RNA sequence: GGGAACGACUCGAGUAGAGUCGAAAAUGAUCGAGAGAUCUAACGAUGUACGCGAGUCAACCGCACAGACUCGAGCGAAAGCUCGGUCGAAAGACCGCGUACAUCGGUCGGCAAGUGUCUAGUCAAACCAUCAGGCGAUGUUCGCAUCGCCUGAUGGAAAAGAAACAACAACAACAAC
Reactivity to DMS in 0.01 (KOAc 150mM, MgCl2 10mM, bicine 150mM(pH8.5), 24C), signal-to-noise 1, nucleotides 027 to 126: u000g000a010u000c000g000a270g000a190g030a000u010c000u000a080a060c000g000a010u010g000u000a000c000g020c010g010a060g000u000c000a110a220c150c060g010c240a160c100a150g010a000c000u000c010g060a000g000c010g020a050a070a240g010c000u000c000g010g020u000c010g010a090a070a130g000a000c010c000g000c000g010u000a000c010a000u000c000g000g000u000c080g000g000c070a090a120g010u010g000u000c010u000a030g010u010c100a040a100a090
The record gives the reactivity of an RNA of 177 nucleotides to DMS. The reactions ran in a buffer of 150 mM KOAc, 10 mM MgCl2 and 150 mM bicine (pH 8.5), at 24 C. Reactivities are rounded to 0.1 and cut off at 0 and 3.